[RMDB]
RNA sequence: GGGAACGACUCGAGUAGAGUCGAAAACUAUCUUUGUUAUUAGCAUUGUUACUUUACCGUUUUGAACAAUGUUUAUCUUGUUUUUAAUGGGAGUAAAGGAUGUGAGAACUUCGCGUUCUAUCCAUUAACAAUACACUCCUUUCGAGGAGUGUAUUGUAAAAGAAACAACAACAACAAC
Reactivity to DMS in 0.01 (KOAc 150mM, MgCl2 10mM, bicine 150mM(pH8.5), 24C), signal-to-noise 4, nucleotides 027 to 126: c040u000a060u010c060u000u010u010g000u010u000a060u010u000a230g000c000a020u000u000g000u000u000a030c020u000u000u010a210c040c030g010u000u000u000u000g010a010a030c010a000a010u010g020u000u010u000a110u020c080u000u000g010u000u000u000u000u010a000a020u010g010g010g010a050g020u000a030a030a040g000g010a010u000g020u000g010a180g010a060a040c060u000u000c120g020c110g010u000u000c040u000a100u010c040c050a110u000u010a070
Reactivity to 2A3 in 0.01 (KOAc 150mM, MgCl2 10mM, bicine 150mM(pH8.5), 24C), signal-to-noise 3, nucleotides 027 to 126: c020u060a100u220c100u070u200u130g060u110u150a180u060u120a080g000c020a020u000u000g020u050u000a090c020u040u050u100a160c030c060g070u000u010u060u060g000a010a000c010a010a020u090g020u040u030u050a060u030c020u000u030g000u010u030u000u000u020a020a010u020g010g020g020a040g040u020a010a060a100g050g020a000u020g030u040g020a040g020a070a050c000u110u090c150g020c040g090u000u000c010u030a050u000c010c020a040u080u100a030

Chemical mapping of a 177-nucleotide RNA with DMS and 2A3. The data come from the RNA Mapping Database (RMDB), library OK2TST. The RNA was probed in 150 mM KOAc, 10 mM MgCl2 and 150 mM bicine (pH 8.5) at 24 C. The DMS profile rests on 5,451 reads.